[RMDB]
RNA sequence: GGGAACGACUCGAGUAGAGUCGAAAAGAUAUGGACCUGUCGACAUGCGUGAUCGGGUCGGAAACGACCCAUGACGCAACAGCGCAGGUCCUAAGUCAAAAGAUCGAUUGCUUCGGCAAUCGAUCAAGUUCCUAAACCUGUUCGCAGGUUUAGGAACAAAAGAAACAACAACAACAAC
Reactivity to DMS in 0.01 (KOAc 150mM, MgCl2 10mM, bicine 150mM(pH8.5), 24C), signal-to-noise 3, nucleotides 027 to 126: g000a060u000a300u010g000g010a010c000c000u000g010u010c020g030a140c090a140u000g020c000g040u000g010a020u010c220g040g000g000u010c000g010g000a090a080a300c010g010a010c010c000c010a020u000g000a040c000g000c000a010a030c180a210g010c070g000c010a000g000g020u000c010c000u000a000a080g010u000c030a110a100a100a100g000a020u000c000g010a010u000u000g000c000u000u030c200g030g010c000a010a000u000c000g000a000u000c000a020a070
Reactivity to 2A3 in 0.01 (KOAc 150mM, MgCl2 10mM, bicine 150mM(pH8.5), 24C), signal-to-noise 1, nucleotides 027 to 126: g020a000u100a020u150g000g000a000c000c050u040g130u300c030g000a180c030a140u070g000c000g020u020g120a010u050c210g010g000g000u000c010g030g000a090a090a000c000g010a000c000c010c000a010u000g010a000c010g000c010a040a020c050a050g030c020g000c000a020g000g010u000c000c000u000a000a000g010u000c000a020a000a010a130g000a000u000c010g000a010u010u010g000c010u060u070c140g210g020c000a000a010u040c000g000a010u000c010a000a000
The data come from the RNA Mapping Database (RMDB), library TTRDEL.
Chemical mapping of a 177-nucleotide RNA with DMS and 2A3.
DMS adducts were read by reverse transcription with MarathonRT.
The reactions ran in a buffer of 150 mM KOAc, 10 mM MgCl2 and 150 mM bicine (pH 8.5), at 24 C.